Conditions: 150 mM KOAc, 10 mM MgCl2 and 150 mM bicine (pH 8.5), 24 C. An RNA of 177 nucleotides, treated with DMS and read out base by base. For DMS the reverse transcriptase was MarathonRT. Reactivities are rounded to 0.1 and cut off at 0 and 3.
RNA sequence: GGGAACGACUCGAGUAGAGUCGAAAAGAUAUGGAAACUUAAGCGCUAAAUCCUCAUAGGGAGCUUAGUGUCGGAAACGACAUGGGAGCAUCGAUCUAUAGGAUUUAGCGCUUAAGUUUCCUAAGUCGAUUAUUACGCUGUUCGCAGCGUAAUAAUCAAAAGAAACAACAACAACAAC
Reactivity to DMS in 0.01 (KOAc 150mM, MgCl2 10mM, bicine 150mM(pH8.5), 24C), signal-to-noise 2, nucleotides 027 to 126: g010a090u010a300u030g020g000a000a030a000c010u010u010a010a000g000c000g000c010u000a010a010a000u000c000c000u010c290a020u000a010g000g020g000a040g020c030u000u000a300g020u000g010u010c000g000g000a100a080a300c010g010a000c000a000u010g000g030g010a020g020c000a260u000c170g010a080u010c010u000a010u000a020g020g000a020u000u000u000a010g010c020g000c000u000u000a000a000g000u000u000u000c000c000u010a010a080g010u010c100